This 177-nucleotide RNA was probed chemically with 2A3 and DMS. The RNA was probed in 150 mM KOAc, 10 mM MgCl2 and 150 mM bicine (pH 8.5) at 24 C. For DMS the reverse transcriptase was MarathonRT. 2A3 adducts were read by reverse transcription with SuperScript II with manganese. Source: RMDB library OK2TRN, as collected in RNAgym.

[RMDB]
RNA sequence: GGGAACGACUCGAGUAGAGUCGAAAAUGGAGAAUGGUGGGAUGGAUACACCGGACAACCGUGCGUUGUUAUCGAUGACUUCUACGGAUGGAUCAAAUACGAUGAGCUUCUCAAGAUCUGCGACAGAAAAAGGAAAGAUUUUCGAAUCUUUCCUUUUAAAAGAAACAACAACAACAAC
Reactivity to 2A3 in 0.01 (KOAc 150mM, MgCl2 10mM, bicine 150mM(pH8.5), 24C), signal-to-noise 1, nucleotides 027 to 126: u140g030g040a120g080a080a200u050g130g010u050g010g000g000a030u060g020g010a000u070a130c030a040c050c060g000g010a000c010a020a050c000c030g000u030g040c130g030u060u080g060u100u030a080u160c080g010a030u100g020a060c000u050u000c030u140a020c050g030g030a050u070g080g020a030u030c010a030a120a080u090a070c010g050a040u090g050a020g030c050u080u020c030u020c050a030a010g030a090u030c040u040g060c070g070a010c030a070g090a060
Reactivity to DMS in 0.01 (KOAc 150mM, MgCl2 10mM, bicine 150mM(pH8.5), 24C), signal-to-noise 9, nucleotides 027 to 126: u010g010g000a100g010a090a100u000g010g020u010g000g010g010a090u010g010g010a130u010a120c060a040c040c020g010g000a130c070a030a050c030c040g020u010g020c140g010u000u000g010u000u010a080u010c100g010a090u000g010a090c070u000u010c030u000a100c080g010g000a090u010g000g000a070u010c060a060a070a080u010a080c110g010a070u000g000a090g000c070u000u000c020u000c030a070a110g000a070u010c040u000g010c070g000a070c130a080g000a050